[RMDB]
RNA sequence: GGGAACGACUCGAGUAGAGUCGAAAAGAUUUAAGCUCACACUGGUCAAAAGGAACCAAGAUACAAAGAACUCUGAGCUGUCAUCGUCCCCAUCUCUGUGAGCCACAACCAACAGCAGGACCCAACGUCACGAUUACCUGUUCGCAGGUAAUCGUGAAAAAGAAACAACAACAACAAC
Reactivity to DMS in 0.01 (KOAc 150mM, MgCl2 10mM, bicine 150mM(pH8.5), 24C), signal-to-noise 3, nucleotides 027 to 126: g000a090u020u060u080a240a040g000c000u000c010a050c210a090c190u050g000g010u050c070a080a070a180a110g000g000a150a050c010c050a060a110g000a140u070a080c110a110a100a060g010a020a040c080u010c110u010g000a060g000c000u000g000u020c090a090u030c040g040u000c030c000c000c080a010u020c060u000c020u000g010u010g000a050g000c000c040a040c080a050a060c090c000a060a080c170a100g020c000a040g000g020a070c000c040c000a030a140c190g000
Reactivity to 2A3 in 0.01 (KOAc 150mM, MgCl2 10mM, bicine 150mM(pH8.5), 24C), signal-to-noise 4, nucleotides 027 to 126: g060a010u110u130u120a040a020g010c000u030c000a020c010a000c050u050g010g000u010c030a030a090a180a250g160g000a050a040c000c000a020a020g030a060u190a100c090a040a180a020g040a120a050c040u040c040u140g010a000g010c000u000g060u040c030a050u020c010g090u050c040c010c000c000a030u020c030u000c010u090g030u040g020a020g000c000c020a030c030a070a070c000c010a030a040c010a040g000c010a030g020g020a050c000c010c010a070a080c040g040
Chemical mapping of a 177-nucleotide RNA with DMS and 2A3. For 2A3 the reverse transcriptase was SuperScript II with manganese. The 2A3 profile rests on 2,393 reads. DMS adducts were read by reverse transcription with MarathonRT. The data come from the RNA Mapping Database (RMDB), library OK1LIB. The DMS profile rests on 2,542 reads. The reactions ran in a buffer of 150 mM KOAc, 10 mM MgCl2 and 150 mM bicine (pH 8.5), at 24 C.